[RMDB]
RNA sequence: GGGAACGACUCGAGUAGAGUCGAAAAACACCAAAACUGAAAACGGAAGGCAAUCCUUCCACGACGAUACUUACUUUCCUUUGAUCGUCGUUACUACUGGCAUAGCCACAAAGGAGAACAAACGUGAGCGCGGACACUGACUUCGGUCAGUGUCCAACUAUCGUUCACAGUUCGCUGUGAACGAUAGAAAAGAAACAACAACAACAAC
Reactivity to 2A3 in 0.01 (KOAc 150mM, MgCl2 10mM, bicine 150mM(pH8.5), 24C), signal-to-noise 7, nucleotides 027 to 156: a000c080a080c030c050a070a040a020a070c160u240g070a080a060a020a040c040g000g010a000a000g030g000c180a040a210u270c000c010u000u000c000c000a000c000g010a000c000g000a000u090a190c030u100u050a030c030u100u150u080c030c010u060u030u030g020a010u010c000g000u000c000g000u030u040a030c030u030a020c030u000g010g020c080a230u120a120g030c010c010a030c040a040a050a000g060g010a050g030a070a030c050a100a080a010c120g070u100g090a070g090c120g000c080g040g000a000c000a000c000u000g000a000c010u040u060c210g030g000u010c000a000g000u010g000u010c000c000a000a010
Reactivity to DMS in 0.01 (KOAc 150mM, MgCl2 10mM, bicine 150mM(pH8.5), 24C), signal-to-noise 2, nucleotides 027 to 156: a040c070a230c050c020a080a070a100a300c110u000g010a070a030a080a050c050g050g000a020a000g150g040c150a200a120u010c000c010u000u000c000c010a130c030g030a010c010g030a060u000a030c070u000u000a060c100u010u010u000c020c020u000u030u000g010a030u000c030g020u020c010g030u000u000a080c060u010a070c050u000g000g000c040a180u000a140g000c020c050a070c050a030a050a060g020g010a070g000a070a220c100a040a090a170c170g010u000g000a090g020c030g000c090g010g010a030c000a010c000u000g010a010c000u000u000c300g100g000u000c010a030g010u000g000u020c000c000a000a030